Description
Chemical mapping of a 177-nucleotide RNA with 2A3 and DMS. For DMS, 2,502 sequencing reads were counted. It was measured as part of the RMDB library M2PK50. The reactions ran in a buffer of 150 mM KOAc, 10 mM MgCl2 and 150 mM bicine (pH 8.5), at 24 C. 2A3 adducts were read by reverse transcription with SuperScript II with manganese.
[RMDB]
RNA sequence: GGGAACGACUCGAGUAGAGUCGAAAACAAGGACGUUUCGACGUCCUUGAUAGGACCGCCCUUUUGGGCUAAGCCCAUACGGACAGCCGGGUCCACUGCCGAACGCAAACCCCUUCGGGGGUUUGAACGAACACAUCCUAUUCGUAGGAUGUGUUCGAAAAGAAACAACAACAACAAC
Reactivity to 2A3 in 0.01 (KOAc 150mM, MgCl2 10mM, bicine 150mM(pH8.5), 24C), signal-to-noise 2, nucleotides 027 to 126: c010a000a000g010g000a000c010g010u010u060u150c250g090a010c000g000u000c000c000u010u010g000a000u030a010g040g000a010c000c040g010c000c000c000u060u120u190u260g040g000g020c060u090a090a030g030c000c000c000a020u080a060c030g040g060a080c020a020g060c020c010g170g000g020u000c000c000a010c010u010g020c000c000g090a110a040c060g000c090a000a000a000c000c000c010c010u020u090c180g100g010g010g000g010u000u010u000g010a010a000
Reactivity to DMS in 0.01 (KOAc 150mM, MgCl2 10mM, bicine 150mM(pH8.5), 24C), signal-to-noise 2, nucleotides 027 to 126: c000a020a040g000g010a030c000g010u000u000u020c150g020a030c000g020u000c010c000u000u000g000a070u000a090g010g000a030c040c010g010c010c010c000u000u000u000u020g010g000g000c010u000a040a120g030c000c010c020a120u010a100c100g020g000a070c030a040g000c040c060g000g010g010u000c010c010a150c000u000g010c020c000g010a140a080c200g010c020a020a010a000c010c000c000c000u000u000c180g030g000g010g000g000u000u000u000g000a080a170